Structure probing data (2A3) for a 177-nucleotide construct. The data come from the RNA Mapping Database (RMDB), library RFMREP.
[RMDB]
RNA sequence: GGGAACGACUCGAGUAGAGUCGAAAACAUGUGAGACUAAUAUACCUGCAUGCUAGUCUUCAGGUUCUGAUGGAAGUGACAUGCGUGAUGCUGUCAUGUGUUACUGUCAGGACUCGACUGGUGUGCGCGUGACAUUGGGCUUCGGCCCAAUGUCACGAAAAGAAACAACAACAACAAC
Reactivity to 2A3 in 0.01 (KOAc 150mM, MgCl2 10mM, bicine 150mM(pH8.5), 24C), signal-to-noise 1, nucleotides 027 to 126: c020a050u250g060u060g290a110g080a030c040u140a150a090u120a030u150a140c000c020u030g000c000a000u040g000c000u000a000g000u010c080u210u220c080a010g000g110u030u020c000u010g000a000u040g030g070a150a060g000u040g020a000c000a060u300g020c000g000u300g220a190u300g000c020u000g000u000c000a000u020g150u010g020u000u110a150c020u030g030u030c000a000g000g010a020c000u020c070g010a000c020u000g010g000u000g000u000g010c000g000
The 2A3 profile rests on 621 reads. For 2A3 the reverse transcriptase was SuperScript II with manganese. The RNA was probed in 150 mM KOAc, 10 mM MgCl2 and 150 mM bicine (pH 8.5) at 24 C.